[RMDB]
RNA sequence: GGGAACGACUCGAGUAGAGUCGAAAAGGUCUUCGAAGCUUCCUUUGGCUACUACCCGGUGGAAACAACUGAAGCUUCAACGCCUUUUUUUCCUAUCUUCUUUAGCACCGGGCUAGGGAGUAAGCCCGUGGAACCUUAGUUUUGUUCCCUCGGGACUCCCAGAGACAUAGUUCGCUAUGUCUCUGGGAAAAGAAACAACAACAACAAC
Reactivity to 2A3 in 0.01 (KOAc 150mM, MgCl2 10mM, bicine 150mM(pH8.5), 24C), signal-to-noise 2, nucleotides 027 to 156: g000g030u070c030u050u060c180g010a010a000g000c000u030u000c000c000u050u030u040g100g000c100u180a060c030u100a030c140c000c000g020g000u030g020g180a300a200a060c020a050a020c030u050g000a000a000g010c000u000u000c000a000a010c020g030c000c000u000u010u060u010u010u070u050c010c000u000a120u010c030u090u000c000u020u210u090a000g000c020a000c000c000g040g000g000c000u010a010g000g020g010a040g020u040a100a030g040c000c000c000g000u010g020g010a000a000c010c090u170u100a170g070u180u250u140u220g000u030u020c010c010c020u060c010g020g000g040a050c050u010
Source: RMDB library VIROID, as collected in RNAgym. Structure probing data (2A3) for a 207-nucleotide construct. The 2A3 profile rests on 1,066 reads. Values cover nucleotides 27 to 156.